RNA sequence: GGGAACGACUCGAGUAGAGUCGAAAACACGCGGUCUUCUGAGGUUUCUAGAAGUUUCGGACGCGUGGCACCGUCGCCAAGCUGUUUCACAAUGUCUGGCGCGGAGAUGAUCAAAUCAGCCGUGUACAUGCUGUUCUCUUUUCGAAGAGAACAGCAUAAAAGAAACAACAACAACAAC
Reactivity to 2A3 in 0.01 (KOAc 150mM, MgCl2 10mM, bicine 150mM(pH8.5), 24C), signal-to-noise 2, nucleotides 027 to 126: c000a010c010g030c020g030g040u020c030u050u000c030u090g090a050g150g020u120u140u000c030u080a040g010a050a020g000u020u030u070c060g030g070a050c010g030c010g000u010g000g010c020a020c010c000g190u250c030g010c000c000a040a070g010c010u040g070u120u260u180c110a090c020a110a090u110g030u000c010u020g000g000c000g000c010g060g000a020g020a060u120g010a070u110c060a040a070a090u070c030a020g110c030c040g050u040g020u060a080c030
Reactivity to DMS in 0.01 (KOAc 150mM, MgCl2 10mM, bicine 150mM(pH8.5), 24C), signal-to-noise 2, nucleotides 027 to 126: c010a020c010g020c000g020g000u020c020u000u000c040u010g010a100g000g010u000u010u000c020u010a030g000a050a020g010u000u020u000c050g000g000a100c030g020c020g010u000g020g010c100a170c030c020g000u000c030g020c010c030a010a120g040c020u000g000u000u000u010c160a130c210a080a060u010g020u010c040u000g000g000c000g010c010g010g010a090g030a120u000g010a130u020c160a070a060a300u010c060a050g000c020c010g000u000g020u000a110c250
Record summary:
This 177-nucleotide RNA was probed chemically with 2A3 and DMS. The RNA was probed in 150 mM KOAc, 10 mM MgCl2 and 150 mM bicine (pH 8.5) at 24 C. For DMS, 1,960 sequencing reads were counted. DMS adducts were read by reverse transcription with MarathonRT. 2A3 adducts were read by reverse transcription with SuperScript II with manganese.